Structure probing data (DMS and 2A3) for a 207-nucleotide construct. The 2A3 profile rests on 1,323 reads. For DMS, 5,982 sequencing reads were counted. The RNA was probed in 150 mM KOAc, 10 mM MgCl2 and 150 mM bicine (pH 8.5) at 24 C.
[RMDB]
RNA sequence: GGGAACGACUCGAGUAGAGUCGAAAAUGGGCCGUGUGCUUAACCAGGACAAGAUCUCCUUCUCUCCAACGUUGUUGCCAACUCAUGAUUCUCAUAACCUGUGCUUGGAGAGACGUGGACCCAGAGUAAAACGAAGGGUGCUUCGGCACCCUUCGAACGAACUAAUCAUGUUCGCAUGAUUAGUUCGAAAAGAAACAACAACAACAAC
Reactivity to DMS in 0.01 (KOAc 150mM, MgCl2 10mM, bicine 150mM(pH8.5), 24C), signal-to-noise 3, nucleotides 027 to 156: u000g000g020g060c010c030g040u000g040u010g010c070u000u040a120a120c070c050a100g020g030a200c060a100a120g000a180u000c040u000c020c010u000u000c010u000c000u000c000c010a050a110c150g020u010u000g000u030u000g000c020c020a060a130c030u000c050a090u000g010a120u010u000c060u000c060a080u000a100a100c070c020u010g020u010g010c070u000u000g020g000a070g000a030g000a010c040g000u000g020g010a080c010c010c020a170g000a180g020u000a060a050a110a160c020g000a040a010g010g020g050u000g010c020u000u010c260g030g020c000a000c000c000c000u000u000c000g000a000a090
Reactivity to 2A3 in 0.01 (KOAc 150mM, MgCl2 10mM, bicine 150mM(pH8.5), 24C), signal-to-noise 2, nucleotides 027 to 156: u050g010g000g010c020c010g060u080g010u110g040c070u140u120a070a070c060c010a020g040g050a020c060a080a110g040a220u060c050u020c040c000u040u030c010u000c010u010c010c010a040a010c090g000u000u000g040u010u030g040c020c050a060a050c030u030c070a080u080g070a140u180u000c050u010c070a050u070a130a050c010c030u060g040u100g080c070u060u050g010g000a030g000a000g000a010c020g060u030g000g030a050c030c010c000a040g010a010g070u130a040a120a030a030c010g000a010a000g000g000g010u000g000c030u000u040c080g070g000c000a000c020c020c000u000u000c000g000a000a000